An RNA of 177 nucleotides, treated with 2A3 and DMS and read out base by base. Reactivities are given for positions 27 through 126. The data come from the RNA Mapping Database (RMDB), library RFM100. For DMS, 1,499 sequencing reads were counted. DMS adducts were read by reverse transcription with MarathonRT.
[RMDB]
RNA sequence: GGGAACGACUCGAGUAGAGUCGAAAACGAGUCCGAAACGGGCGACCAUAGUCGGCGGCCGCAGACGCGAAGCCGGGUGAGCUACCCGUGGGCAGGCUGAAGCGGGGGUAAGACCCCGUGGAGGGCCUCGCCGUGGGGAAUUCGUUCCCCACGGCGAAAAAGAAACAACAACAACAAC
Reactivity to 2A3 in 0.01 (KOAc 150mM, MgCl2 10mM, bicine 150mM(pH8.5), 24C), signal-to-noise 2, nucleotides 027 to 126: c050g010a000g080u070c000c000g070a140a140a010c010g000g000g060c050g060a070c050c020a140u110a110g140u080c030g000g040c010g000g000c030c010g000c020a030g060a180c050g000c000g010a050a010g080c010c000g040g020g010u090g080a070g000c070u130a030c000c000c010g000u100g020g010g000c050a000g000g000c000u030g000a030a000g000c000g000g010g000g010g000u030a000a110g080a250c000c000c000c010g000u000g000g000a030g000g030g000c000c000
Reactivity to DMS in 0.01 (KOAc 150mM, MgCl2 10mM, bicine 150mM(pH8.5), 24C), signal-to-noise 2, nucleotides 027 to 126: c060g000a080g000u000c000c010g000a010a160a010c120g000g010g050c300g000a140c040c000a070u050a110g040u020c000g000g010c000g000g030c070c040g000c010a080g030a180c180g010c010g010a110a110g000c000c020g030g020g000u000g000a120g020c140u010a090c000c000c010g030u000g000g000g000c030a060g000g000c000u020g000a220a200g000c030g000g000g000g010g000u000a120a190g000a220c000c000c000c010g070u000g000g000a110g000g010g000c030c020